This 177-nucleotide RNA was probed chemically with 2A3 and DMS. Conditions: 150 mM KOAc, 10 mM MgCl2 and 150 mM bicine (pH 8.5), 24 C. For 2A3 the reverse transcriptase was SuperScript II with manganese.

[RMDB]
RNA sequence: GGGAACGACUCGAGUAGAGUCGAAAAGAAGUGGCAAUCCGGUCAGCGUGGAGGUUCAGUCCGUCACCGACGGCGUGAAGGUAAAAGUGAGCCGUGUUCCUGACGGUGUUGCUGAAUACAGCGUAUGUACACUUAUCAUGUUCGCAUGAUAAGUGUAAAAAGAAACAACAACAACAAC
Reactivity to 2A3 in 0.01 (KOAc 150mM, MgCl2 10mM, bicine 150mM(pH8.5), 24C), signal-to-noise 9, nucleotides 027 to 126: g040a050a020g060u110g050g000c020a010a030u010c030c040g100g150u050c020a010g010c080g100u060g050g130a120g050g000u020u010c010a030g120u030c030c000g020u020c010a040c110c070g200a190c080g090g050c080g050u050g040a060a040g030g040u180a040a090a050a090g140u050g030a000g000c020c010g060u140g100u140u040c010c000u010g000a010c010g030g030u120g050u070u050g000c000u010g020a030a020u180a050c050a020g060c030g110u150a080u210g090
Reactivity to DMS in 0.01 (KOAc 150mM, MgCl2 10mM, bicine 150mM(pH8.5), 24C), signal-to-noise 9, nucleotides 027 to 126: g010a120a100g020u010g010g010c020a050a050u000c040c010g010g010u000c020a030g010c180g020u000g010g010a180g010g010u000u000c040a090g000u010c010c010g010u000c010a050c060c060g010a130c160g010g010c110g020u000g010a050a050g010g010u010a050a060a100a130g010u000g000a070g010c000c010g010u000g010u000u000c060c010u000g000a040c030g000g010u010g010u000u000g010c010u000g000a090a090u010a080c100a100g010c120g010u010a090u010g010